[RMDB]
RNA sequence: GGGAACGACUCGAGUAGAGUCGAAAAACGCCAUACGUGGCGAAGGGCUUUCAAGUCACUAGUGGUUCCGUUUAGUAGAAGGUUUUGCAUUGUUUCAAAAUGGUGCCCUAGUGACUACAAAGCCCAAGCUCAGAGACAGAUUCGUCUGUCUCUGAGCAAAAGAAACAACAACAACAAC
Reactivity to 2A3 in 0.01 (KOAc 150mM, MgCl2 10mM, bicine 150mM(pH8.5), 24C), signal-to-noise 4, nucleotides 027 to 126: a000c000g010c000c000a020u020a050c220g090u010g000g000c030g020a110a130g000g000g000c000u000u000u050c100a030a030g000u030c000a000c000u010a010g000u060g300g000u000u010c000c000g020u000u000u010a250g040u060a040g050a120a090g130g060u090u100u130u210g160c170a180u020u190g150u050u110u040c010a030a030a010a010u040g010g000u010g000c000c000c000u010a020g000u000g000a000c000u010a010c000a000a010a000g000c000c000c000a000a010
The record gives the reactivity of an RNA of 177 nucleotides to 2A3. Source: RMDB libraries RFM100 and RFMREP, as collected in RNAgym. 2A3 adducts were read by reverse transcription with SuperScript II with manganese. The reactions ran in a buffer of 150 mM KOAc, 10 mM MgCl2 and 150 mM bicine (pH 8.5), at 24 C.